RNA sequence: GGGAACGACUCGAGUAGAGUCGAAAAGCUCGUCCACUCCGAUCGAGCCACUAGGAGCUAUCGGAACUUUUAGCGGAGUGACCAAAUCUCUCGACUUCAGUUGGACAUCGUGAGAUCGAGGUCCAAAGACGUUUGUUGCCUUCGGGUAACGAACGUCAAAAGAAACAACAACAACAAC
Reactivity to 2A3 in 0.01 (KOAc 150mM, MgCl2 10mM, bicine 150mM(pH8.5), 24C), signal-to-noise 9, nucleotides 027 to 126: g010c000u020c030g070u050c030c000a030c020u000c000c000g020a030u050c050g050a010g010c000c010a060c050u130a100g080g030a080g020c010u020a030u050c010g020g030a040a050c030u030u030u040u120a040g030c040g020g030a040g010u090g020a020c000c010a020a040a050u020c010u000c000u010c010g030a040c020u080u040c090a150g040u120u130g060g010a020c010a030u010c010g010u010g030a050g000a010u040c030g050a050g010g010u000c000c000a020a030a020
Reactivity to DMS in 0.01 (KOAc 150mM, MgCl2 10mM, bicine 150mM(pH8.5), 24C), signal-to-noise 8, nucleotides 027 to 126: g000c010u000c080g000u010c030c030a140c050u000c020c020g000a030u010c080g000a050g010c010c030a150c190u030a060g000g010a060g010c020u000a040u010c030g000g020a030a100c070u010u000u020u020a060g010c070g000g000a070g010u010g000a050c030c010a130a110a050u010c020u000c010u000c010g010a060c200u020u010c050a180g010u010u020g000g000a030c250a150u010c010g000u000g000a040g010a050u020c070g000a130g000g010u000c010c060a040a110a090